RNA sequence: GGGAACGACUCGAGUAGAGUCGAAAAAAAAGCACAGACGCCUCCAAGUGUGCAGGGCACUGAUGGGGGCCAGGGCAGGCCCAGCCAAAGUGCAAGACCUGGCACUUAGUCGGAGGUGAGGAUGAAAGAUAUCAUUUGGGUUCGCCCAAAUGAUAUCAAAAGAAACAACAACAACAAC
Reactivity to 2A3 in 0.01 (KOAc 150mM, MgCl2 10mM, bicine 150mM(pH8.5), 24C), signal-to-noise 1, nucleotides 027 to 126: a000a000a000a000g060c050a020c040a090g200a050c030g020c010c000u000c000c000a020a000g000u000g000u180g280c010a000g000g000g000c000a010c000u060g040a300u250g020g000g010g020g000c000c000a010g000g070g080c040a050g000g040c000c000c000a030g130c020c030a020a040a000g020u010g000c000a010a030g150a130c000c020u020g000g040c000a000c020u070u050a130g160u130c080g000g020a010g000g040u000g000a020g030g060a060u150g070a050a070a000
Reactivity to DMS in 0.01 (KOAc 150mM, MgCl2 10mM, bicine 150mM(pH8.5), 24C), signal-to-noise 2, nucleotides 027 to 126: a070a050a050a130g000c010a060c060a170g030a200c080g000c000c020u020c000c020a050a080g010u030g020u000g030c040a020g000g000g020c000a010c000u000g000a200u020g020g000g020g000g010c000c000a000g010g020g020c270a200g000g000c000c000c020a180g000c010c000a010a250a010g000u000g010c070a170a080g000a300c000c000u000g000g010c000a000c000u000u000a080g020u000c300g020g000a050g000g030u000g030a020g000g000a090u000g000a090a120a100

Structure probing data (2A3 and DMS) for a 177-nucleotide construct. Values cover nucleotides 27 to 126. As a SHAPE reagent, 2A3 marks flexible, mostly unpaired nucleotides at the ribose 2'-OH. Values are in units of 0.01, from 0 to 300, in steps of 10. The RNA was probed in 150 mM KOAc, 10 mM MgCl2 and 150 mM bicine (pH 8.5) at 24 C. For 2A3 the reverse transcriptase was SuperScript II with manganese. For DMS the reverse transcriptase was MarathonRT. It was measured as part of the RMDB library RFMREP.